[RMDB]
Structure probing data (DMS and 2A3) for a 177-nucleotide construct.
For DMS, 1,746 sequencing reads were counted.
The reactions ran in a buffer of 150 mM KOAc, 10 mM MgCl2 and 150 mM bicine (pH 8.5), at 24 C.
Values cover nucleotides 27 to 126.

RNA sequence: GGGAACGACUCGAGUAGAGUCGAAAACGUGUGCGCUCCUGGGUCAGCUUCGGCCUGGUGCACGCCACCAAUGCUGUGCUGGCCUUCCUCUGCUUCCUGGGCACCUUCCUGGUGCAGAGCCAGCCGGACGGACCAGUGUAUUCGUACACUGGUCCGUAAAAGAAACAACAACAACAAC
Reactivity to DMS in 0.01 (KOAc 150mM, MgCl2 10mM, bicine 150mM(pH8.5), 24C), signal-to-noise 2, nucleotides 027 to 126: c250g020u000g010u010g000c060g010c040u010c170c020u000g010g000g020u010c010a050g020c170u010u010c110g010g000c020c010u000g000g010u000g000c040a080c100g000c070c030a060c000c060a090a090u010g000c020u000g010u010g020c010u000g000g020c300c050u000u000c100c020u010c050u000g000c020u000u000c090c000u010g020g000g000c130a060c130c150u010u000c070c060u010g010g010u000g010c030a030g040a120g010c060c030a080g000c030c060g020g000
Reactivity to 2A3 in 0.01 (KOAc 150mM, MgCl2 10mM, bicine 150mM(pH8.5), 24C), signal-to-noise 2, nucleotides 027 to 126: c040g030u060g020u030g030c020g000c010u070c020c060u060g040g010g000u000c000a060g020c120u260u180c150g030g000c000c030u010g030g020u030g000c080a070c140g000c000c010a000c000c010a100a090u150g010c020u060g050u120g070c010u020g000g000c030c000u040u010c000c010u030c010u020g010c010u130u090c030c020u020g020g040g000c100a120c080c050u180u150c010c050u020g000g040u000g000c010a000g040a000g030c030c000a020g000c030c000g040g030